[RMDB]
RNA sequence: GGGAACGACUCGAGUAGAGUCGAAAAGAAGUACAGUUCGCUGUACUUCAAAUUCCCACCACCGCCGCCGCCGCCGCCCCCUCCACCGCCGCCACCACCAAAAAAGCAUUUAGUUCGCUAAAUGCAAGAUUCAAACGUAGUUCGCUACGUUUGAAUCAAAAGAAACAACAACAACAAC
Reactivity to DMS in 0.01 (KOAc 150mM, MgCl2 10mM, bicine 150mM(pH8.5), 24C), signal-to-noise 1, nucleotides 027 to 126: g020a040a020g010u010a020c000a000g010u000u020c300g010c000u010g010u020a000c000u000u020c010a000a130a240u000u000c000c000c020a240c120c060a080c020c030g000c040c040g040c040c090g010c050c040g000c070c010g030c050c010c020c010c050u000c020c020a050c140c020g000c030c060g010c010c010a080c010c020a080c030c040a020a040a020a070a010a150g010c010a020u000u000u000a000g000u000u020c120g040c000u000a010a010a000u000g000c000a090a050
Source: RMDB library M2PK50, as collected in RNAgym. An RNA of 177 nucleotides, treated with DMS and read out base by base.